This 207-nucleotide RNA was probed chemically with 2A3 and DMS. The RNA was probed in 150 mM KOAc, 10 mM MgCl2 and 150 mM bicine (pH 8.5) at 24 C. For 2A3 the reverse transcriptase was SuperScript II with manganese. DMS adducts were read by reverse transcription with MarathonRT. Source: RMDB library OK3TST, as collected in RNAgym.
[RMDB]
RNA sequence: GGGAACGACUCGAGUAGAGUCGAAAAUACUACGAACUUCAAAGAGGAACCAGGAGUAGAGGAGGAACAUGAAAGUGAACAGGGAGCAUGACUAUUGAAGCACAGCCCCACAGGGAGGGGUUUAGGCCUCCGGAUGACUGCGGGCAGGCCUGGGUAACAGUAUAGGAUUAUUCGUAAUCCUAUACUGAAAAGAAACAACAACAACAAC
Reactivity to 2A3 in 0.01 (KOAc 150mM, MgCl2 10mM, bicine 150mM(pH8.5), 24C), signal-to-noise 2, nucleotides 027 to 156: u100a010c050u040a030c060g130a090a030c040u140u160c110a090a080a020g050a020g050g000a040a030c050c030a030g010g050a010g010u100a020g010a020g020g010a020g010g010a030a020c050a060u110g050a140a050a040g070u060g060a050a010c020a070g020g010g010a040g020c040a030u050g000a030c040u080a070u150u190g060a080a000g000c030a030c020a080g000c010c000c000c010a030c010a020g020g030g020a020g000g010g000g020u030u060u080a010g000g010c000c000u000c010c000g000g010a030u110g030a040c060u120g010c020g020g020g010c040a020g000g020c010c020u010g000g000g000u060a080a010
Reactivity to DMS in 0.01 (KOAc 150mM, MgCl2 10mM, bicine 150mM(pH8.5), 24C), signal-to-noise 2, nucleotides 027 to 156: u010a100c060u000a110c040g040a060a120c040u000u000c030a070a130a120g020a100g020g020a050a100c030c050a090g010g010a130g010u000a030g010a080g030g000a130g000g020a050a060c060a060u000g010a100a070a100g010u010g020a050a080c050a120g020g030g000a080g040c060a100u000g000a100c020u000a160u020u000g000a070a070g010c020a080c040a070g010c040c000c000c000a030c130a060g000g010g040a070g000g020g020g000u010u000u000a040g030g030c030c000u010c000c010g000g020a080u020g020a110c040u000g000c030g040g020g000c050a050g000g010c000c000u000g020g010g010u000a070a170